[RMDB]
RNA sequence: GGGAACGACUCGAGUAGAGUCGAAAAGAAAAAGUCGUCGAGCCUAGGUCGAGACUGGAUACGAUCCUCUCGCAACCUCCUACCUAGGUACGAGUAUCGGAGAAAAGUCUCGAGAGACGACGAAAAAGGGUAAUAUAUGCUUCGGCAUAUAUUACCCAAAAGAAACAACAACAACAAC
Reactivity to DMS in 0.01 (KOAc 150mM, MgCl2 10mM, bicine 150mM(pH8.5), 24C), signal-to-noise 3, nucleotides 027 to 126: g050a060a050a040a110a110g020u000c010g000u010c000g000a140g040c010c000u000a160g010g020u010c000g000a030g010a010c020u000g020g000a230u000a020c070g000a010u010c140c150u000c010u000c010g000c110a070a030c050c010u000c160c100u000a040c280c100u020a030g000g020u000a120c020g000a000g010u040a000u000c040g020g010a040g000a100a190a120a000g030u000c000u000c000g000a040g000a030g000a000c000g000a000c000g000a000a040a080a080a050
Reactivity to 2A3 in 0.01 (KOAc 150mM, MgCl2 10mM, bicine 150mM(pH8.5), 24C), signal-to-noise 4, nucleotides 027 to 126: g120a000a150a020a010a000g040u000c010g000u010c030g050a070g060c000c020u050a060g060g160u010c010g000a000g010a020c030u010g020g000a050u060a130c050g030a040u020c010c030u060c010u000c030g020c050a070a100c000c000u060c000c030u120a170c010c050u060a010g010g010u000a010c010g000a000g020u070a030u040c020g050g000a110g100a150a080a000a000g020u000c000u000c010g020a010g020a020g000a000c010g000a000c000g040a040a030a000a010a010
Structure probing data (DMS and 2A3) for a 177-nucleotide construct. Values cover nucleotides 27 to 126. Conditions: 150 mM KOAc, 10 mM MgCl2 and 150 mM bicine (pH 8.5), 24 C.